[RMDB]
About this RNA: This 177-nucleotide RNA was probed chemically with DMS. The reactions ran in a buffer of 150 mM KOAc, 10 mM MgCl2 and 150 mM bicine (pH 8.5), at 24 C. DMS adducts were read by reverse transcription with MarathonRT.
RNA sequence: GGGAACGACUCGAGUAGAGUCGAAAAGAUAUGGACACACGGUGAACCAACAGCUAUGUUCGGAAACGAACAUAGACAUGGUUACCGGUGUCCUAAGUCAAAACAUGGAUCCUUCGGGAUCCAUGAAUCUGUAUUAGGCCUUCGGGCCUAAUACAGAAAAAGAAACAACAACAACAAC
Reactivity to DMS in 0.01 (KOAc 150mM, MgCl2 10mM, bicine 150mM(pH8.5), 24C), signal-to-noise 1, nucleotides 027 to 126: g020a020u010a300u010g000g010a020c000a000c010a170c030g030g000u010g020a040a030c020c000a040a090c290a250g000c000u000a000u010g000u000u000c000g010g000a030a080a200c000g010a000a000c000a000u000a000g020a050c040a290u000g040g010u010u000a020c000c000g040g000u000g010u040c000c000u000a010a040g010u000c070a070a100a110a250c000a000u000g000g000a000u000c000c010u000u000c190g030g040g000a000u010c000c000a000u010g000a040a110